[RMDB]
RNA sequence: GGGAACGACUCGAGUAGAGUCGAAAAAUUGCUGGUUUUGCUGCUGAUGUGCUGCGCCACUGCGUGUAUUGCCGCUACACCCGCCACACAAUACCGCCGUGGAUUGGACGAGAUGAUGAGGAGCGGCCCAUGCUAUGGAUUUCGAUCCAUAGCAUGGAAAAGAAACAACAACAACAAC
Reactivity to DMS in 0.01 (KOAc 150mM, MgCl2 10mM, bicine 150mM(pH8.5), 24C), signal-to-noise 5, nucleotides 027 to 126: a070u050u010g020c000u000g000g000u010u010u010u010g000c030u000g010c050u000g000a070u000g010u020g000c050u000g010c060g010c030c020a030c040u000g000c040g000u020g010u010a050u010u000g010c030c050g020c030u010a080c120a080c050c030c020g000c040c030a070c070a130c110a030a060u030a100c060c010g000c030c030g010u010g010g000a080u020u010g010g000a090c040g000a080g000a090u010g010a090u030g000a090g000g010a080g000c020g010g000c080
Reactivity to 2A3 in 0.01 (KOAc 150mM, MgCl2 10mM, bicine 150mM(pH8.5), 24C), signal-to-noise 8, nucleotides 027 to 126: a010u190u140g010c030u060g020g040u050u080u100u100g020c010u010g000c010u030g020a100u080g100u090g040c030u020g010c010g010c020c010a020c010u030g000c030g010u130g010u040a040u010u110g040c030c010g010c040u040a040c040a080c060c020c000g000c040c000a040c000a010c010a030a040u070a110c020c000g010c010c020g020u050g030g020a100u050u140g050g010a030c050g010a040g020a110u170g010a050u070g050a060g070g020a030g030c000g000g000c000
Structure probing data (DMS and 2A3) for a 177-nucleotide construct.
For 2A3 the reverse transcriptase was SuperScript II with manganese.
DMS (dimethyl sulfate) methylates the pairing face of unpaired adenines and cytosines.
It was measured as part of the RMDB library OK1LIB.
Values are in units of 0.01, from 0 to 300, in steps of 10.
Reactivities are given for positions 27 through 126.
The DMS profile rests on 15,134 reads.
The RNA was probed in 150 mM KOAc, 10 mM MgCl2 and 150 mM bicine (pH 8.5) at 24 C.